[RMDB]
RNA sequence: GGGAACGACUCGAGUAGAGUCGAAAACCAGGUCGGACCGCGAGGAGGUGGAGAUGCCAUGCCGACCCGAAGAGGAAAGAAGGACGCGAGACGGUGAACCUGUGAGUGGAAGCCCGCUUUAUUCACUAGACCUUGCUGUUCGCAGCAAGGAAAAGAAACAACAACAACAAC
Reactivity to DMS in 0.01 (KOAc 150mM, MgCl2 10mM, bicine 150mM(pH8.5), 24C), signal-to-noise 8, nucleotides 027 to 129: c040c040a040g000g000u040c060g000g060a060c040c060g000c130g020a080g020g000a080g060g000u040g030g010a090g020a120u050g020c040c080a030u040g030c060c030g030a010c060c050c040g030a090a000g040a090g040g010a040a060a070g000a030a040g000g000a050c100g030c110g020a090g020a060c080g000g050u030g020a050a050c100c060u010g040u040g000a060g000u000g000g000a160a080g030c060c050c030g020c110u030u010u030a070u010u000c060a030c000u050a110g040a260
Reactivity to 2A3 in 0.01 (KOAc 150mM, MgCl2 10mM, bicine 150mM(pH8.5), 24C), signal-to-noise 9, nucleotides 027 to 129: c000c010a010g010g070u040c030g020g020a070c020c020g030c040g040a060g030g010a020g000g040u050g010g020a090g010a020u110g040c040c020a050u110g000c010c010g020a030c000c000c020g020a020a010g030a020g020g000a050a020a010g040a010a010g010g010a000c010g020c030g030a070g000a030c040g010g020u050g020a020a030c000c010u050g030u060g070a040g010u040g030g010a020a000g020c010c000c000g000c010u080u110u060a140u070u090c060a050c080u050a050g050a110
This 170-nucleotide RNA was probed chemically with DMS and 2A3. Source: RMDB library 15KLIB, as collected in RNAgym. The RNA was probed in 150 mM KOAc, 10 mM MgCl2 and 150 mM bicine (pH 8.5) at 24 C. The DMS profile rests on 32,981 reads. DMS adducts were read by reverse transcription with MarathonRT. For 2A3, 32,143 sequencing reads were counted.